[RMDB]
RNA sequence: GGGAACGACUCGAGUAGAGUCGAAAAGGCAAAUGCAAUUUAAUCAUCAGUAUGUUUUAUCAGGCUUAAGAACAUAAUUUCUCUAUAACUCUACUGAACUGUUCUGCAGGGUUAUAGGCAUGGUGCCGAGAUGGAUACUGUUCGCAGUAUCCAUCUCAAAAGAAACAACAACAACAAC
Reactivity to DMS in 0.01 (KOAc 150mM, MgCl2 10mM, bicine 150mM(pH8.5), 24C), signal-to-noise 3, nucleotides 027 to 126: g020g010c000a030a060a050u000g010c030a060a080u010u000u010a100a090u010c050a060u010c100a050g010u010a010u000g000u000u000u000u000a080u010c100a060g000g020c100u000u010a070a090g010a030a040c080a050u010a080a080u000u000u000c070u010c000u010a040u000a020a020c010u010c010u000a020c000u000g000a030a300c210u010g000u010u000c040u000g010c030a020g000g010g010u010u000a020u000a020g000g000c060a030u000g000g000u000g020c070c080
Reactivity to 2A3 in 0.01 (KOAc 150mM, MgCl2 10mM, bicine 150mM(pH8.5), 24C), signal-to-noise 4, nucleotides 027 to 126: g010g000c030a050a000a070u040g000c030a030a220u060u080u150a180a060u060c010a020u010c010a000g060u020a050u110g040u040u080u040u060a120u100c090a030g070g040c030u150u100a090a020g050a080a000c000a030u130a100a130u160u130u020c060u000c000u030a010u010a030a010c000u000c010u060a030c010u020g030a090a060c090u150g140u260u060c030u090g040c000a000g000g010g000u000u000a000u010a000g040g030c000a030u120g090g090u100g020c020c040
About this RNA
Chemical mapping of a 177-nucleotide RNA with DMS and 2A3. The reactions ran in a buffer of 150 mM KOAc, 10 mM MgCl2 and 150 mM bicine (pH 8.5), at 24 C. For DMS the reverse transcriptase was MarathonRT.